[RMDB]
RNA sequence: GGGAACGACUCGAGUAGAGUCGAAAAGAGUUCGGUUGGAGCGACAAGUAUUUAGCUAGAGAUAGCUAAAUCACCUCGGUAUGAUUAGGGUGAGACCUAGGAACCGUAGGGGUAUUCUCAAAGGAAGGUUACCGAACAACCUUCGGGUUGUUCGGAAGUAACAGACAUACUUCGGUAUGUCUGUUACAAAAGAAACAACAACAACAAC
Reactivity to DMS in 0.01 (KOAc 150mM, MgCl2 10mM, bicine 150mM(pH8.5), 24C), signal-to-noise 2, nucleotides 027 to 156: g030a090g000u000u000c050g020g040u010u000g010g000a120g020c040g020a050c030a020a070g000u000a030u010u000u000a030g000c000u000a000g000a300g010a300u000a020g020c010u000a000a010a020u000c050a040c020c000u000c010g000g000u020a080u010g000a130u000u000a040g000g010g030u020g020a280g000a160c010c000u000a050g030g000a100a100c020c020g010u000a060g000g020g000g020u000a040u000u000c020u020c040a070a090a120g030g000a090a050g010g010u000u000a220c020c000g020a020a010c000a010a010c000c000u000u000c260g040g020g010u000u000g020u000u000c000g010g000a020a050
Reactivity to 2A3 in 0.01 (KOAc 150mM, MgCl2 10mM, bicine 150mM(pH8.5), 24C), signal-to-noise 3, nucleotides 027 to 156: g060a020g020u080u080c060g040g050u050u090g040g020a060g030c030g060a030c040a070a010g030u070a050u010u010u000a000g000c000u000a000g000a020g020a210u010a010g000c000u010a000a000a000u020c010a040c000c010u030c030g000g020u250a180u150g050a060u060u070a030g000g030g010u030g100a120g030a060c000c010u030a010g040g010a040a000c020c000g030u050a050g010g000g000g020u020a070u140u080c040u030c030a110a120a020g070g020a050a020g020g040u080u110a050c000c000g000a000a000c000a000a010c000c010u010u020c080g100g000g000u000u020g000u020u000c000g000g010a010a000
Chemical mapping of a 207-nucleotide RNA with DMS and 2A3. The data come from the RNA Mapping Database (RMDB), library M2RFPK. The RNA was probed in 150 mM KOAc, 10 mM MgCl2 and 150 mM bicine (pH 8.5) at 24 C.